[RMDB]
RNA sequence: GGGAACGACUCGAGUAGAGUCGAAAAGCAACAGAUAACUGGAUGCAGCGUAGGAUUCUACGCAUAUCCAGUACGAAUGGUACCUGUAAAGAAAAUAACGAUGGAUGUACAAGUACCAACAUUGGGUUAAGCGAUGGUGAUGUCAAUCACAUUUGCAGAUAUAUGGGUCAUUCGUGACCCAUAUAUCAAAAGAAACAACAACAACAAC
Reactivity to DMS in 0.01 (KOAc 150mM, MgCl2 10mM, bicine 150mM(pH8.5), 24C), signal-to-noise 3, nucleotides 027 to 156: g030c030a100a110c070a110g000a240u010a070a060c000u000g000g000a030u000g040c150a160g030c000g000u000a000g000g020a260u010u010c000u000a000c010g000c010a140u010a020u000c010c000a040g000u010a020c000g030a090a130u010g020g020u010a030c000c000u000g050u010a030a100a120g020a110a050a080a230u010a090a090c090g010a170u010g010g010a170u010g020u000a030c020a020a040g030u000a030c030c020a020a110c180a110u000u010g020g010g000u000u000a060a130g000c020g010a070u010g010g020u000g010a050u000g000u000c200a080a080u010c050a030c010a090u000u000u000g040c050a160
Reactivity to 2A3 in 0.01 (KOAc 150mM, MgCl2 10mM, bicine 150mM(pH8.5), 24C), signal-to-noise 7, nucleotides 027 to 156: g040c020a000a060c020a060g080a110u110a150a080c010u000g010g000a010u020g060c120a070g000c090g000u010a020g040g100a300u300u130c000u010a000c000g010c010a010u030a010u050c000c000a000g010u010a010c020g140a120a090u060g000g000u020a010c020c010u020g010u040a030a090a030g140a050a140a040a080u230a110a030c120g080a120u170g070g000a030u080g020u030a010c000a010a030g000u000a020c000c020a010a030c040a050u040u110g100g000g000u080u130a070a060g020c020g020a020u070g080g150u040g010a020u040g080u210c100a070a030u020c010a040c000a020u040u040u180g010c020a010
This 207-nucleotide RNA was probed chemically with DMS and 2A3. For DMS, 5,910 sequencing reads were counted. 2A3 adducts were read by reverse transcription with SuperScript II with manganese. The RNA was probed in 150 mM KOAc, 10 mM MgCl2 and 150 mM bicine (pH 8.5) at 24 C. Source: RMDB library OK3TST, as collected in RNAgym. DMS adducts were read by reverse transcription with MarathonRT.